[RMDB]
RNA sequence: GGGAACGACUCGAGUAGAGUCGAAAAGUCAAACCAACACUUACUAGAUACUACCACAGGCUGACCGAGAUGUGGAAAUCUUUAAAAAUAUAGAUGGCACUAGCUAACAUCCAAGCAACUAGUACUACCGGAGAAGAGUCUUCGGACUCUUCUCCGGAAAAGAAACAACAACAACAAC
Reactivity to 2A3 in 0.01 (KOAc 150mM, MgCl2 10mM, bicine 150mM(pH8.5), 24C), signal-to-noise 1, nucleotides 027 to 126: g130u130c020a000a240a210c100c000a020a000c000a070c000u070u100a090c000u000a030g040a080u000a050c060u090a060c120c060a030c010a000g140g000c040u050g030a190c000c030g190a090g000a220u060g000u100g000g090a000a090a000u050c000u050u250u080a160a230a100a130a080u190a000u000a030g100a100u040g000g000c040a000c050u000a000g000c050u000a040a000c060a000u080c030c030a000a100g070c040a080a100c010u060a000g030u060a030c030u160a090
Conditions: 150 mM KOAc, 10 mM MgCl2 and 150 mM bicine (pH 8.5), 24 C. An RNA of 177 nucleotides, treated with 2A3 and read out base by base. Reactivities are rounded to 0.1 and cut off at 0 and 3. Values cover nucleotides 27 to 126. 2A3 adducts were read by reverse transcription with SuperScript II with manganese.